An RNA of 177 nucleotides, treated with DMS and 2A3 and read out base by base. The DMS profile rests on 1,161 reads. Values cover nucleotides 27 to 126.
[RMDB]
RNA sequence: GGGAACGACUCGAGUAGAGUCGAAAAUUCAUCACCAACUGUCUGCUAGGAACAAGCCUCUCUGGUAAGAGAGUGAUGAAGGCGGUCAGCAGAUUGACCAACAACCUACUGUAUCGGGCACCAAGGACGAUCCGAUAGGUUUCGACCUAUCGGAUCGAAAAGAAACAACAACAACAAC
Reactivity to DMS in 0.01 (KOAc 150mM, MgCl2 10mM, bicine 150mM(pH8.5), 24C), signal-to-noise 2, nucleotides 027 to 126: u000u000c010a030u000c010a040c050c050a300a120c090u000g000u020c000u000g010c030u020a050g010g010a060a050c090a150a110g000c170c010u000c000u000c000u010g000g100u000a060a010g010a010g010a070g030u000g010a020u010g010a040a040g000g000c140g020g000u000c050a010g020c140a030g000a100u010u020g010a100c090c050a060a150c080a010a030c060c010u000a050c080u020g000u000a060u000c060g000g000g020c050a090c050c070a070a070g020g020a180
Reactivity to 2A3 in 0.01 (KOAc 150mM, MgCl2 10mM, bicine 150mM(pH8.5), 24C), signal-to-noise 2, nucleotides 027 to 126: u020u000c010a020u080c010a020c040c030a080a100c030u060g090u100c010u030g000c020u020a030g040g040a110a080c090a230a090g140c020c010u000c000u000c000u000g040g060u030a050a000g070a000g020a020g030u000g020a020u040g020a010a050g040g130c030g000g030u010c000a000g000c000a020g030a300u040u050g020a050c000c030a000a060c000a020a020c010c010u010a030c030u130g030u040a030u080c040g000g060g020c050a060c070c010a020a040g110g020a020